[RMDB]
Structure probing data (DMS) for a 177-nucleotide construct. The data come from the RNA Mapping Database (RMDB), library OK2TST. Conditions: 150 mM KOAc, 10 mM MgCl2 and 150 mM bicine (pH 8.5), 24 C. For DMS, 654 sequencing reads were counted.
RNA sequence: GGGAACGACUCGAGUAGAGUCGAAAAAUAUUGAUGCAGGCUGAUAUCAGAAAUGUCAGAUUCAAAGAGCUGAUCAGCAUUGGAAAUACUGAAUAUUUGAGAUCAUUAUCUCAGGACCUGUGCAGACUGCUUCUGCUCAAUUCGUUGAGCAGAAGCAAAAAGAAACAACAACAACAAC
Reactivity to DMS in 0.01 (KOAc 150mM, MgCl2 10mM, bicine 150mM(pH8.5), 24C), signal-to-noise 1, nucleotides 027 to 126: a130u040a080u000u020g040a120u000g000c000a020g020g000c080u000g010a020u030a080u010c020a050g030a080a050a110u020g020u000c010a020g020a140u000u000c030a030a110a080g010a200g060c050u000g000a090u030c180a050g060c020a040u000u000g000g020a100a030a140u010a040c010u000g000a020a020u000a270u000u000u000g010a040g020a030u000c080a090u000u010a110u000c030u020c020a090g010g020a120c050c000u000g010u000g020c080a070g010a040c190